[RMDB]
RNA sequence: GGGAACGACUCGAGUAGAGUCGAAAACGCAAUGAGGUAAGGUGGGACUUUUCCUUCGGGAACCAAGCGGUUGGUUCCGAGGGGGGUGUGAUCCAGGUACCGCCGUAGAAACUGGAUUACGACGUCUACCCGGGAUUCAAACCCGGUCCCCUCCAGACCAUCCAAAUUACUUCGGUAAUUUGGAUGGAAAAGAAACAACAACAACAAC
Reactivity to 2A3 in 0.01 (KOAc 150mM, MgCl2 10mM, bicine 150mM(pH8.5), 24C), signal-to-noise 1, nucleotides 027 to 156: c100g030c070a010a200u170g020a100g030g070u100a130a050g060g010u100g040g000g000a020c030u100u120u130u130c000c000u020u010c060g090g040g020a020a020c000c000a040a000g070c020g130g090u030u000g000g000u000u020c000c000g010a010g000g000g010g000g010g010u070g030u040g020a000u000c000c010a000g010g000u010a020c000c000g000c010c030g060u090a040g130a020a300a030c030u070g020g000a040u000u020a020c070g060a040c060g050u000c040u030a060c000c000c000g030g010g000a040u120u230c140a170a100a100c030c000c020g000g010u070c010c000c000c020u000c010c050a020g040a030
The record gives the reactivity of an RNA of 207 nucleotides to 2A3. The data come from the RNA Mapping Database (RMDB), library VIROID. Values cover nucleotides 27 to 156.